[RMDB]
RNA sequence: GGGAACGACUCGAGUAGAGUCGAAAAGAUAUGGAGCGACCAGGCUAGCUUAGUAUCGGAAACGAUAUGGGAGCUUGGACCCUGGCGCUCCUAAGUCAAAAUCCCGAAGCGUUCGCGCUUCGGGAAACCAAUAACAUAUCUUCGGAUAUGUUAUUGGAAAAGAAACAACAACAACAAC
Reactivity to 2A3 in 0.01 (KOAc 150mM, MgCl2 10mM, bicine 150mM(pH8.5), 24C), signal-to-noise 4, nucleotides 027 to 126: g020a000u050a040u160g020g000a000g020c020g270a300c000c010a000g020g040c060u090a030g010c010u050u010a010g000u010a010u010c000g010g030a080a070a030c070g010a000u020a020u060g300g210g040a020g000c030u060u160g090g070a100c000c010c030u000g000g020c000g000c000u000c000c000u000a000a000g000u000c010a000a000a000a300u040c000c000c000g010a000a010g000c020g030u130u300c300g020c020g000c010u000u020c030g000g010g000a050a000a000
Reactivity to DMS in 0.01 (KOAc 150mM, MgCl2 10mM, bicine 150mM(pH8.5), 24C), signal-to-noise 4, nucleotides 027 to 126: g010a040u000a300u000g000g010a030g020c000g010a240c020c000a020g020g000c060u000a030g010c000u000u000a300g000u000a000u000c000g000g000a130a090a210c000g000a000u000a020u000g010g010g020a010g010c010u010u010g030g020a170c300c000c000u000g000g010c020g020c000u000c000c000u010a000a040g000u010c040a070a110a180a260u000c000c000c000g010a010a020g010c000g020u000u020c300g020c000g000c000u000u000c000g000g000g000a000a010a060